[RMDB]
This 207-nucleotide RNA was probed chemically with 2A3 and DMS. For 2A3 the reverse transcriptase was SuperScript II with manganese. DMS adducts were read by reverse transcription with MarathonRT. Reactivities are given for positions 27 through 156.
RNA sequence: GGGAACGACUCGAGUAGAGUCGAAAAGCGUACUACAAUCCGAAAGUAGGGACAUGCUCUGGACCCUUCUCUCCCAAAUAGGAGAGAAGCUAACAGAGCAACAGCCCUACUAGUAGCUGAUUGUAUCGCAAAAGGGAACAGGUUCGCCUGUUCCCAAGUAACACGAAUACUUCGGUAUUCGUGUUACAAAAGAAACAACAACAACAAC
Reactivity to 2A3 in 0.01 (KOAc 150mM, MgCl2 10mM, bicine 150mM(pH8.5), 24C), signal-to-noise 5, nucleotides 027 to 156: g010c010g030u090a090c050u000a000c020a000a000u000c010c010g030a070a020a000g010u000a010g020g000g020a040c050a150u050g010c000u010c000u010g040g000a040c000c010c000u000u000c020u000c000u010c000c030c030a220a300a150u300a130g000g000a000g000a000g010a000a000g010c000u000a040a000c000a000g010a000g000c000a000a010c000a000g010c000c010c000u000a000c000u000a000g000u000a000g020c110u070g000a000u000u000g000u010a020u300c000g000c020a030a060a030a050g010g000g000a000a000c010a000g000g050u100u120c170g110c080c000u000g000u000u000c000c000c000a000a000
Reactivity to DMS in 0.01 (KOAc 150mM, MgCl2 10mM, bicine 150mM(pH8.5), 24C), signal-to-noise 2, nucleotides 027 to 156: g010c050g030u000a070c080u000a000c000a050a010u020c020c040g020a260a190a160g030u010a020g000g000g040a020c050a300u000g010c000u010c000u010g010g000a270c300c290c000u000u030c020u000c010u010c010c030c040a050a160a300u010a090g000g030a040g000a020g030a010a000g000c000u000a110a300c040a020g000a000g040c040a000a020c030a150g000c000c000c030u000a000c010u000a040g030u000a230g000c120u020g030a090u010u000g010u020a030u000c010g000c020a080a070a090a130g000g030g000a020a000c000a000g010g010u000u000c300g020c000c000u000g000u000u000c000c010c010a000a060